[RMDB]
RNA sequence: GGGAACGACUCGAGUAGAGUCGAAAAGAUAUGGACAAGGAACUACGUCUAUUGAGCGACGAAGCUCAAUUUACUCGGAAACGAGUAAAUUGAGCAGAGCUCAAACAAUGACGCCUUGUCCUAAGUCCUAUCAAUCUGUGUUCGCACAGAUUGAUAGAAAAGAAACAACAACAACAAC
Reactivity to 2A3 in 0.01 (KOAc 150mM, MgCl2 10mM, bicine 150mM(pH8.5), 24C), signal-to-noise 3, nucleotides 027 to 126: g040a020u120a030u160g000g000a010c010a010a030g060g000a160a110c200u280a090c300g000u000c010u030a120u040u050g000a000g000c050g300a300c130g160a300a020g000c010u010c010a000a000u000u000u000a000c010u010c000g030g000a070a040a040c000g000a000g000u000a000a000a000u020u000g000a000g000c010a000g000a000g000c000u000c000a000a010a000c170a090a210u290g010a000c010g060c000c000u000u000g000u000c000c000u000a010a000g010u000c010
Reactivity to DMS in 0.01 (KOAc 150mM, MgCl2 10mM, bicine 150mM(pH8.5), 24C), signal-to-noise 4, nucleotides 027 to 126: g000a120u000a220u000g010g000a000c000a010a000g000g000a160a030c170u020a300c040g020u000c010u010a120u000u000g000a010g000c070g020a160c220g010a140a170g000c010u000c010a000a000u000u000u000a000c010u000c010g010g010a070a080a170c000g010a010g030u000a000a000a020u000u000g010a000g040c000a010g000a230g020c000u000c000a000a100a130c270a070a210u010g000a020c040g000c000c000u000u000g000u010c010c000u000a020a050g010u000c020
The record gives the reactivity of an RNA of 177 nucleotides to 2A3 and DMS. The reactions ran in a buffer of 150 mM KOAc, 10 mM MgCl2 and 150 mM bicine (pH 8.5), at 24 C. It was measured as part of the RMDB library TTRINS. For DMS the reverse transcriptase was MarathonRT. The DMS profile rests on 3,628 reads. The 2A3 profile rests on 6,798 reads.